[RMDB]
RNA sequence: GGGAACGACUCGAGUAGAGUCGAAAAAGCGCAUGCGUUGCUCUUGACCAGUUUACUCGUGACUGGUUUUCGAGUAUCAACUUUAGCGAGUUACGUUUAACUACCUCACCUGAAUAGUUAAAAAGAGUCUUAACAGGUUAGCUGGUUCAUACUAGCCGUCAUGAGAGGACUUCGGUCCUCUCAUGACAAAAGAAACAACAACAACAAC
Reactivity to 2A3 in 0.01 (KOAc 150mM, MgCl2 10mM, bicine 150mM(pH8.5), 24C), signal-to-noise 1, nucleotides 027 to 156: a010g150c160g020c050a100u270g040c050g120u120u090g020c000u010c000u060u050g020a000c000c000a000g000u060u000u040a030c080u000c000g000u000g010a000c000u000g080g000u040u010u050u090c000g000a000g010u050a130u120c090a030a100c020u080u250u250a010g000c010g000a000g050u000u010a000c010g010u010u000u030a010a010c000u000a000c010c010u000c050a000c000c000u000g010a030a030u010a010g050u010u060a030a030a100a000a000g010a060g140u010c020u120u020a160a050c050a050g040g000u000u060a000g030c030u060g030g030u100u200c070a040u110a230c000u050a020g050c050c050